Structure probing data (DMS and 2A3) for a 177-nucleotide construct. The RNA was probed in 150 mM KOAc, 10 mM MgCl2 and 150 mM bicine (pH 8.5) at 24 C.
RNA sequence: GGGAACGACUCGAGUAGAGUCGAAAACAUAAGUCGACUGGGACCUUUUAAUUGCUUUUCGAAAUAUGGUGACGUUUUGGUUUCGUUUGCAGCAUUGGGGGAGUAGAAUAAUGGUCAUUAACUGAGGCGGCAGCCUCAUAUUCGUAUGAGGCUGCCGAAAAGAAACAACAACAACAAC
Reactivity to DMS in 0.01 (KOAc 150mM, MgCl2 10mM, bicine 150mM(pH8.5), 24C), signal-to-noise 1, nucleotides 027 to 126: c070a080u000a110a120g000u000c040g000a050c070u000g000g010g000a090c090c010u000u000u000u010a080a120u000u000g010c040u010u000u010u010c000g000a060a060a080u000a030u010g000g020u000g030a060c060g010u010u010u000u020g010g020u000u000u000c040g020u010u000u010g020c080a050g040c040a070u000u000g020g010g020g000g000a040g020u000a030g000a040a060u000a040a110u000g010g010u000c050a070u000u000a030a100c080u010g000a050g010g000
Reactivity to 2A3 in 0.01 (KOAc 150mM, MgCl2 10mM, bicine 150mM(pH8.5), 24C), signal-to-noise 2, nucleotides 027 to 126: c010a040u100a100a080g060u060c010g050a060c030u060g090g030g070a030c030c020u080u210u130u190a130a140u140u060g000c040u070u060u040u040c040g040a080a120a100u230a060u070g170g000u110g010a060c060g040u080u070u070u100g010g000u050u130u020c040g050u020u110u240g000c040a050g000c020a050u030u050g010g010g040g020g000a040g050u020a010g000a050a000u100a090a040u020g010g030u010c000a020u120u160a110a060c000u020g020a050g190g030